[RMDB]
RNA sequence: GGGAACGACUCGAGUAGAGUCGAAAAACUGCGGUAUUCGUACCGCAGUACAUAAAAAGGAUAAAAUACCAGUAGGCCGAAACGCAAGCGAGCACUACUGGCGCAAGAACCACUUCGGUGGUUCUAAACAAUAGACCUCUUUCGAGAGGUCUAUUGUAAAAGAAACAACAACAACAAC
Reactivity to 2A3 in 0.01 (KOAc 150mM, MgCl2 10mM, bicine 150mM(pH8.5), 24C), signal-to-noise 3, nucleotides 027 to 126: a010c000u010g010c000g020g020u010a000u000u080c130g020u040a030c010c000g000c000a000g000u000a000c010a020u300a020a180a020a010a020g170g020a100u260a120a160a060a040u220a090c010c000a010g000u000a000g010g030c010c010g050a110a200a020c110g030c150a000a080g070c010g080a100g050c010a050c290u010a000c000u010g000g010c010g030c050a020a030g000a000a000c000c010a000c040u040u100c250g080g000u000g010g000u000u010c000u010a000a000
Reactivity to DMS in 0.01 (KOAc 150mM, MgCl2 10mM, bicine 150mM(pH8.5), 24C), signal-to-noise 3, nucleotides 027 to 126: a030c000u010g000c000g000g020u000a010u000u010c230g020u000a010c000c000g010c000a010g000u000a020c160a070u000a080a060a040a060a060g010g010a130u010a070a070a050a130u000a090c010c000a010g020u000a010g000g010c030c030g010a030a060a090c190g010c300a100a080g000c020g000a140g010c030a110c000u000a010c010u000g000g000c100g000c240a080a030g000a010a010c000c000a010c000u000u010c170g020g020u000g000g000u000u000c000u000a030a100